[RMDB]
RNA sequence: GGGAACGACUCGAGUAGAGUCGAAAAUGCUCUGGGCGGAAGAGUCUUCUGACUUUUCUAGCCUAUUCAGCUUCGCGUCCUUGAGGCCUGGCGUAACGCGGCUCUUGCCACCAGGAAGCCUCCGCUAGUCGAGCGGACUUGGUCUCUAUCCGCCCAACCAUGGAAUAAACUUCGGUUUAUUCCAUGGAAAAGAAACAACAACAACAAC
Reactivity to DMS in 0.01 (KOAc 150mM, MgCl2 10mM, bicine 150mM(pH8.5), 24C), signal-to-noise 2, nucleotides 027 to 156: u000g010c000u010c030u010g000g000g060c000g020g010a080a020g010a010g000u000c010u000u000c280u000g010a050c000u000u000u000u000c030u000a070g030c010c020u000a010u000u010c020a030g050c030u000u010c050g030c080g000u000c060c060u030u000g010a070g020g020c020c020u010g060g010c040g020u010a090a140c100g000c040g010g010c000u000c110u000u000g020c060c050a090c070c030a150g020g020a110a130g040c020c010u000c010c030g020c030u000a160g030u000c220g010a130g020c010g000g010a060c110u010u000g030g020u000c030u000c040u000a160u000c050c090g000c000c000c000a040a300
Reactivity to 2A3 in 0.01 (KOAc 150mM, MgCl2 10mM, bicine 150mM(pH8.5), 24C), signal-to-noise 6, nucleotides 027 to 156: u070g000c000u000c020u030g000g000g000c000g000g000a000a000g000a000g010u000c020u240u140c160u260g120a140c010u030u020u020u010c010u040a130g000c000c000u000a010u040u070c020a010g020c030u060u080c040g030c040g080u050c050c030u030u070g010a010g020g020c010c020u020g020g000c030g070u140a140a050c140g020c020g050g000c010u020c020u040u090g070c050c020a100c030c010a030g010g040a080a010g000c000c030u020c010c000g010c000u050a070g130u220c090g110a010g000c010g000g000a010c010u070u140g020g010u010c000u000c000u020a110u020c010c020g030c010c010c010a010a050